[RMDB]
Conditions: 150 mM KOAc, 10 mM MgCl2 and 150 mM bicine (pH 8.5), 24 C.
An RNA of 177 nucleotides, treated with DMS and 2A3 and read out base by base.
Source: RMDB library OK2TRN, as collected in RNAgym.
Values are in units of 0.01, from 0 to 300, in steps of 10.
For 2A3, 41,719 sequencing reads were counted.
RNA sequence: GGGAACGACUCGAGUAGAGUCGAAAAAGUACCAUAGUCGUACCAUGUCGAUCUGAGUACGACAUCUCUGCACUCCAUGUGCGAUCUGCGAUCGUAGUACGAGCCAUGCAUGCGUACACUAGACGUACGUUAGUAAUUUCUUCGGAAAUUACUAACGAAAAGAAACAACAACAACAAC
Reactivity to DMS in 0.01 (KOAc 150mM, MgCl2 10mM, bicine 150mM(pH8.5), 24C), signal-to-noise 9, nucleotides 027 to 126: a100g010u010a110c010c030a190u000a080g010u000c070g020u000a010c010c010a030u000g010u010c180g000a140u010c080u000g000a200g010u000a010c010g010a030c060a040u010c080u000c070u010g010c030a050c020u000c160c170a100u010g010u000g000c010g000a030u010c050u000g010c120g000a040u000c100g010u000a080g010u010a050c060g010a070g010c130c100a090u000g020c050a050u000g000c090g010u000a030c030a060c090u000a070g000a100c140g010u000a070
Reactivity to 2A3 in 0.01 (KOAc 150mM, MgCl2 10mM, bicine 150mM(pH8.5), 24C), signal-to-noise 9, nucleotides 027 to 126: a000g050u040a030c010c010a040u090a040g010u010c060g010u000a000c010c010a030u090g110u130c110g100a230u050c070u070g050a040g080u010a010c010g010a010c000a010u010c060u010c030u080g000c010a020c020u090c150c070a150u270g020u020g020c020g020a100u030c030u090g040c040g100a120u040c060g030u050a070g020u010a030c020g010a010g020c060c060a110u200g030c030a040u090g040c040g010u020a010c020a020c060u050a030g030a080c040g070u100a030